[RMDB]
Structure probing data (2A3 and DMS) for a 177-nucleotide construct. For 2A3 the reverse transcriptase was SuperScript II with manganese. The reactions ran in a buffer of 150 mM KOAc, 10 mM MgCl2 and 150 mM bicine (pH 8.5), at 24 C. The data come from the RNA Mapping Database (RMDB), library OK1LIB. The 2A3 profile rests on 4,008 reads.
RNA sequence: GGGAACGACUCGAGUAGAGUCGAAAACAGUGAAAGGAGAGGUCAGCGUCAGCAGCCCGCCGCUGAACGCAGGACAACGCCAAAAGUCGGCGGGGAAAGAUACAGGCUGAAGAUACAGCCAGUACAACGUGGCUAAUAUGUUCGCAUAUUAGCCACGAAAAGAAACAACAACAACAAC
Reactivity to 2A3 in 0.01 (KOAc 150mM, MgCl2 10mM, bicine 150mM(pH8.5), 24C), signal-to-noise 5, nucleotides 027 to 126: c020a030g050u080g190a140a110a050g110g010a130g030a040g140g050u020c010a000g000c000g000u010c010a000g000c000a040g060c010c010c010g020c000c000g000c010u020g010a070a020c020g000c000a020g110g010a020c030a190a030c110g070c010c030a060a060a010a040g300u270c110g000g000c010g000g000g000g000a020a060a020g060a010u090a030c030a010g000g000c000u000g030a100a020g000a090u130a080c000a000g010c000c010a000g010u020a020c030a100a010
Reactivity to DMS in 0.01 (KOAc 150mM, MgCl2 10mM, bicine 150mM(pH8.5), 24C), signal-to-noise 2, nucleotides 027 to 126: c040a050g030u000g020a050a090a070g000g000a050g000a080g000g010u000c020a040g000c020g010u000c010a040g000c060a140g000c000c010c000g000c030c020g000c000u050g000a080a050c100g020c000a110g000g000a090c160a100a110c090g030c000c140a070a130a050a120g070u010c080g010g030c000g000g000g040g000a070a050a100g000a190u010a010c020a030g000g040c030u010g000a160a130g020a190u050a040c000a000g000c000c000a040g010u000a030c050a080a160